[RMDB]
RNA sequence: GGGAACGACUCGAGUAGAGUCGAAAAAUAUAGAUACUGUUGUUAGGGAAUAUAGACAAAAAUAUGGCAAUGCAAUGGCAAAAGGACGUAGUAGUUCCCCUAAACCUGAUCCAUUAUAUAGUACUGUUAAGAAAACAACUAAAAGUCUAUCUACUGGCGUAAUCUCUCAAUUCGUUGAGAGAUUACGAAAAGAAACAACAACAACAAC
Reactivity to 2A3 in 0.01 (KOAc 150mM, MgCl2 10mM, bicine 150mM(pH8.5), 24C), signal-to-noise 2, nucleotides 027 to 156: a000u210a000u030a100g060a030u090a190c040u080g000u040u010g000u010u080a090g090g000g000a020a040u190a000u030a070g000a030c040a100a160a040a050a040u080a040u100g000g010c040a050a030u000g030c020a050a080u030g020g030c010a020a000a130a090g020g000a010c110g010u060a010g010u030a020g010u080u030c000c000c000c010u070a050a050a040c000c040u030g040a040u080c000c000a030u080u000a020u060a000u020a160g000u020a060c030u020g000u060u060a060a050g000a110a210a020a000c020a010a000c000u070a100a090a000a070g000u000c000u000a030u010c030u060a040c010u030g020g000
Reactivity to DMS in 0.01 (KOAc 150mM, MgCl2 10mM, bicine 150mM(pH8.5), 24C), signal-to-noise 1, nucleotides 027 to 156: a140u000a170u010a190g040a170u010a210c050u020g000u000u000g000u000u010a070g000g010g000a080a270u010a090u040a060g010a140c110a020a080a180a050a080u000a060u010g010g040c050a060a050u000g000c070a110a090u050g000g010c050a050a020a090a000g000g090a060c220g020u000a170g000u000a050g020u000u010c000c000c000c090u010a040a120a080c040c000u000g000a120u000c000c010a020u000u020a060u010a070u000a050g020u000a040c090u000g010u000u000a030a090g020a140a060a060a100c090a010a070c090u000a010a040a030a110g040u000c010u000a090u000c090u000a190c090u010g010g060
The record gives the reactivity of an RNA of 207 nucleotides to 2A3 and DMS. The RNA was probed in 150 mM KOAc, 10 mM MgCl2 and 150 mM bicine (pH 8.5) at 24 C.